[RMDB]
RNA sequence: GGGAACGACUCGAGUAGAGUCGAAAACUUCAUCUUUUGGUAUAUCACACUGUGGAUAUGUGAGAAAGAUAUUUUUUGAUGAUAGUCUAAAUGAUUUAUUUUGUCGAGGCAUUUAAAAUGGGACACCAAAUCGUAGGCAGUUCGCUGCCUACGAUUUAAAAGAAACAACAACAACAAC
Reactivity to 2A3 in 0.01 (KOAc 150mM, MgCl2 10mM, bicine 150mM(pH8.5), 24C), signal-to-noise 2, nucleotides 027 to 126: c000u150u130c040a020u050c000u060u070u000u050g120g030u040a030u020a000u080c000a000c000a040c160u080g130u240g240g040a030u030a040u080g060u010g010a140g090a050a070a000g050a030u020a210u030u040u070u040u040u070g070a050u020g000a030u110a030g050u000c010u110a060a080a030u040g080a110u110u080u160a110u020u130u150u020g080u020c060g000a050g100g000c060a080u020u090u270a010a110a010a010u110g080g000g000a020c010a020c130c000
Reactivity to DMS in 0.01 (KOAc 150mM, MgCl2 10mM, bicine 150mM(pH8.5), 24C), signal-to-noise 2, nucleotides 027 to 126: c040u010u000c130a020u000c020u000u000u020u000g010g040u010a010u000a020u000c000a050c000a240c270u040g030u090g050g020a010u010a050u000g000u020g020a270g000a000a020a010g000a030u000a000u010u010u020u020u000u010g010a060u000g000a050u010a050g020u040c020u010a030a050a050u020g000a070u000u000u060a040u020u000u000u040g020u000c040g010a040g010g000c060a040u030u000u000a020a050a080a030u020g000g020g020a100c200a100c120c020
Chemical mapping of a 177-nucleotide RNA with 2A3 and DMS. 2A3 adducts were read by reverse transcription with SuperScript II with manganese. For DMS, 2,466 sequencing reads were counted. For DMS the reverse transcriptase was MarathonRT. The data come from the RNA Mapping Database (RMDB), library OK1LIB.